Conditions: 150 mM KOAc, 10 mM MgCl2 and 150 mM bicine (pH 8.5), 24 C. Structure probing data (DMS and 2A3) for a 177-nucleotide construct. For DMS, 42,162 sequencing reads were counted. Source: RMDB library OK2TRN, as collected in RNAgym. In probing experiments dimethyl sulfate is read out at A N1 and C N3, which are open when not base-paired. The 2A3 profile rests on 44,110 reads.
[RMDB]
RNA sequence: GGGAACGACUCGAGUAGAGUCGAAAAGAUGUCAGGGAAGGGAUCAUCGCAAAUGUUCAAGCAGCACUUGGAGGACAGAACUUAACUCUGGGGACAUUUGAUGCUGAGAGGUAUGAGGAUAGUGAAACAGUGAAUAACUAUUCGUAGUUAUUCACUGAAAAGAAACAACAACAACAAC
Reactivity to DMS in 0.01 (KOAc 150mM, MgCl2 10mM, bicine 150mM(pH8.5), 24C), signal-to-noise 9, nucleotides 027 to 126: g010a090u000g020u000c060a080g010g000g020a110a100g000g010g010a080u000c060a060u000c070g010c090a050a060a070u010g010u010u000c080a090a100g010c060a050g000c060a110c060u000u000g010g010a110g010g010a120c120a060g010a060a080c120u010u010a060a130c080u000c020u000g000g010g010g010a090c060a050u000u000u000g010a070u000g010c040u000g010a070g000a060g010g010u000a050u010g000a080g000g000a070u000a070g010u010g010a110a070a150
Reactivity to 2A3 in 0.01 (KOAc 150mM, MgCl2 10mM, bicine 150mM(pH8.5), 24C), signal-to-noise 9, nucleotides 027 to 126: g060a030u100g020u080c040a020g010g020g060a040a030g040g010g010a040u040c010a020u030c040g020c110a050a060a080u150g020u090u080c030a060a030g020c020a020g010c020a040c060u060u070g030g010a020g010g050a020c020a050g080a130a050c040u120u080a070a020c020u010c010u030g030g000g010g010a010c010a030u070u080u110g050a060u060g010c020u030g010a030g010a030g070g020u100a080u140g030a030g050g020a040u050a110g120u090g080a090a040a020